[RMDB]
RNA sequence: GGGAACGACUCGAGUAGAGUCGAAAAGUUAAUUCGUUAACGCCAUAACCUUUGUGGGUGCUAGCUCUAGCAGAGUCCAAACGACCCAUUGGGUCGUCACUGGACGACGAAGCUAGAGCACAGCACCCACUCUGGUGAUCUUACCUUUCGAGGUAAACAAUCCUGGUUCAUUCGUGAACCAGGAUUGAAAAGAAACAACAACAACAAC
Reactivity to DMS in 0.01 (KOAc 150mM, MgCl2 10mM, bicine 150mM(pH8.5), 24C), signal-to-noise 1, nucleotides 027 to 156: g000u000u010a110a130u000u030c230g020u010u000a020a060c030g030c020c020a130u000a120a050c000c050u000u000u000g020u010g010g000g040u000g030c030u000a210g000c000u000c000u010a020g050c020a080g000a300g020u000c000c010a010a090a020c030g010a000c000c000c030a300u000u020g020g050g030u000c020g010u010c050a030c140u000g040g030a050c010g000a120c090g020a190a240g060c010u000a010g000a050g030c030a000c050a070g060c010a020c000c010c010a010c000u000c010u020g010g000u010g010a060u030c060u000u000a060c000c000u010u000u000c260g030a030g020g000u000a020a050a300
Reactivity to 2A3 in 0.01 (KOAc 150mM, MgCl2 10mM, bicine 150mM(pH8.5), 24C), signal-to-noise 3, nucleotides 027 to 156: g010u020u040a040a040u120u150c180g050u060u050a040a000c030g060c030c020a100u060a160a040c020c010u050u000u020g000u010g010g020g000u010g010c000u020a060g000c010u010c000u010a000g020c040a020g020a010g040u000c000c010a110a220a040c000g010a000c010c010c060a300u140u300g000g000g000u000c000g000u000c000a020c030u000g000g010a000c000g020a030c030g080a080a000g000c010u000a000g000a000g010c000a000c000a000g000c010a000c010c010c000a000c000u000c000u000g020g000u000g010a020u060c050u010u010a010c010c000u060u110u240c300g130a030g030g000u080a070a020a010